[RMDB]
RNA sequence: GGGAACGACUCGAGUAGAGUCGAAAAGCAGGCCUUAGUUAGCACCAUGAAUGGUUAGGGGUAUGGGGGUCAGGGUGAGUGGUCACCAGUGGGUUUCAAGGGAUUGGCCUAUUUCAUCUAAGUUGCCCUAGCACAAUGACUUCGGUCAUUGUGCUAGAAAAGAAACAACAACAACAAC
Reactivity to DMS in 0.01 (KOAc 150mM, MgCl2 10mM, bicine 150mM(pH8.5), 24C), signal-to-noise 1, nucleotides 027 to 126: g010c130a120g000g010c050c020u010u000a110g000u020u010a130g010c110a060c030c020a100u040g000a150a040u040g000g020u000u000a120g010g000g010g010u000a030u000g010g000g000g030g010u000c140a030g000g000g030u000g020a080g020u000g000g020u000c040a050c000c060a160g010u000g000g010g000u000u000u000c030a040a060g020g000g010a080u020u000g000g010c040c030u000a060u000u000u000c020a090u020c040u000a060a060g020u000u010g010c020c030